[RMDB]
Chemical mapping of a 207-nucleotide RNA with 2A3.
Conditions: 150 mM KOAc, 10 mM MgCl2 and 150 mM bicine (pH 8.5), 24 C.
RNA sequence: GGGAACGACUCGAGUAGAGUCGAAAACCUUGUGUUGUUCGCAACACAAGGAAAAAAGAUAUGGAUGCCAUACCGAUAAGUCGUGGUUCGGAAACGAACCCGACUUUUGACGGUGGCAUCCUAAGUCAAAAAACACGCUCUGUUCGCAGAGCGUGAACUUACGGGGUUAGUUCGCUAACCCCGUAAGAAAAGAAACAACAACAACAAC
Reactivity to 2A3 in 0.01 (KOAc 150mM, MgCl2 10mM, bicine 150mM(pH8.5), 24C), signal-to-noise 2, nucleotides 027 to 156: c000c000u000u000g000u000g000u010u010g010u030u090c220g030c130a020a010c050a000c010a000a000g030g140a120a100a040a050a030a020g000a000u010a010u040g000g000a000u000g010c000c020a040u090a300c040c040g080a070u090a290a010g000u010c040g120u180g050g040u010u010c010g010g000a030a030a020c010g000a000a000c000c000c010g000a040c110u030u000u000u050g010a000c000g000g000u000g000g000c000a000u000c000c000u000a010a000g000u060c080a040a040a020a100a120a020c000a000c010g000c000u000c000u010g130u080u080c280g000c050a000g000a000g000c000g010u000g000a020a000

Source: RMDB library RNAMAK, as collected in RNAgym.